The data come from the RNA Mapping Database (RMDB), library OK1LIB. The record gives the reactivity of an RNA of 177 nucleotides to DMS and 2A3. Reactivities are given for positions 27 through 126. The RNA was probed in 150 mM KOAc, 10 mM MgCl2 and 150 mM bicine (pH 8.5) at 24 C. The 2A3 profile rests on 6,201 reads. For DMS the reverse transcriptase was MarathonRT.

RNA sequence: GGGAACGACUCGAGUAGAGUCGAAAAGUCUUUGGUCAUCUGGAUUUUGUUGUAGGGACCCCAAAGGUUCCAGAGGCCGCCGGCGGGAUCCGGAUAACGGAUCGUGUUCGAGUUCGUGAUGACGCCGGCAUAUCCCAUUAUUCGUAAUGGGAUAUGCAAAAGAAACAACAACAACAAC
Reactivity to DMS in 0.01 (KOAc 150mM, MgCl2 10mM, bicine 150mM(pH8.5), 24C), signal-to-noise 6, nucleotides 027 to 126: g000u010c020u010u020u020g000g010u000c000a060u010c000u000g000g000a090u020u020u010u010g010u000u010g010u000a110g010g010g000a060c030c010c030c180a090a090a220g010g000u010u010c000c000a040g000a060g000g000c010c030g020c070c000g000g010c000g000g000g010a030u000c010c010g010g010a060u020a090a110c030g000g010a010u020c160g010u030g020u000u000c010g000a290g000u010u010c020g020u040g000a030u000g000a070c010g010c010c020g000
Reactivity to 2A3 in 0.01 (KOAc 150mM, MgCl2 10mM, bicine 150mM(pH8.5), 24C), signal-to-noise 7, nucleotides 027 to 126: g030u000c030u070u140u110g020g010u010c050a130u000c120u040g090g040a150u050u030u030u080g080u040u040g050u060a090g020g030g080a040c010c000c000c020a020a090a070g060g010u070u020c000c000a010g010a020g030g020c020c000g000c010c000g000g000c010g010g020g040a000u010c000c000g020g030a120u120a180a050c020g020g020a040u080c110g100u140g080u130u070c030g010a060g050u010u050c020g020u110g050a030u030g020a010c020g000c030c010g000